The data come from the RNA Mapping Database (RMDB), library M2RFPK. Chemical mapping of a 207-nucleotide RNA with 2A3. The 2A3 profile rests on 453 reads. The reactions ran in a buffer of 150 mM KOAc, 10 mM MgCl2 and 150 mM bicine (pH 8.5), at 24 C. 2A3 adducts were read by reverse transcription with SuperScript II with manganese. Values cover nucleotides 27 to 156.

RNA sequence: GGGAACGACUCGAGUAGAGUCGAAAAGUUCGCAUGGUGCACUAUUGUGUUAUUAGUAACUAAGUAAGCUUACAAUCGAAAAUGUUUAACCAUAAAAGGUUAAAAUGGUGUAAGACAGUCUGAUACUUUACGGCUUCACGUUUCGACGUGAAGCCAAGGUACAACACACGUUCGCGUGUGUUGUACCAAAAGAAACAACAACAACAAC
Reactivity to 2A3 in 0.01 (KOAc 150mM, MgCl2 10mM, bicine 150mM(pH8.5), 24C), signal-to-noise 1, nucleotides 027 to 156: g000u000u110c060g070c060a070u170g010g060u100g060c060a010c040u260a180u230u270g030u030g010u000u130a020u120u010a030g090u060a180a020c030u000a010a000g180u060a110a000g070c000u020u010a050c030a040a170u180c110g180a020a070a020a110u110g030u040u000u000a000a000c000c000a000u060a150a140a000a000g000g000u000u060a000a000a000a000u070g030g000u050g000u020a010a000g020a000c020a070g090u040c030u100g000a030u060a300c020u000u000u090a030c040g020g010c000u000u000c020a000c020g010u000u060u140c170g240a020c000g010u000g000a000a000g000c000c000a000a010